[RMDB]
RNA sequence: GGGAACGACUCGAGUAGAGUCGAAAACUCUUGGGUCUCUGGGUGCCAGACACGCAGCAGCCACCCCCCAGCUCUGAGCGCCACGUGGCCUGGCUCCGCUUUCCCAGGGUCUGGGCAGUGGGCGCGGAAUAGAAAGGACCUUCGGGUCCUUUCUAUUAAAAGAAACAACAACAACAAC
Reactivity to DMS in 0.01 (KOAc 150mM, MgCl2 10mM, bicine 150mM(pH8.5), 24C), signal-to-noise 2, nucleotides 027 to 126: c070u000c150u010u000g050g040g010u010c040u000c010u000g000g010g010u000g020c010c160a130g010a270c060a030c060g010c040a020g010c180a040g020c040c030a300c000c010c000c000c000c020a240g010c130u000c060u010g000a110g010c000g000c010c010a020c030g020u010g030g000c000c010u000g000g010c010u000c010c020g020c130u010u010u010c010c020c000a300g000g010g000u000c000u010g000g010g030c020a120g020u000g000g020g010c010g020c010g010g010
This 177-nucleotide RNA was probed chemically with DMS.
The data come from the RNA Mapping Database (RMDB), library OK2TRN.
DMS adducts were read by reverse transcription with MarathonRT.
The RNA was probed in 150 mM KOAc, 10 mM MgCl2 and 150 mM bicine (pH 8.5) at 24 C.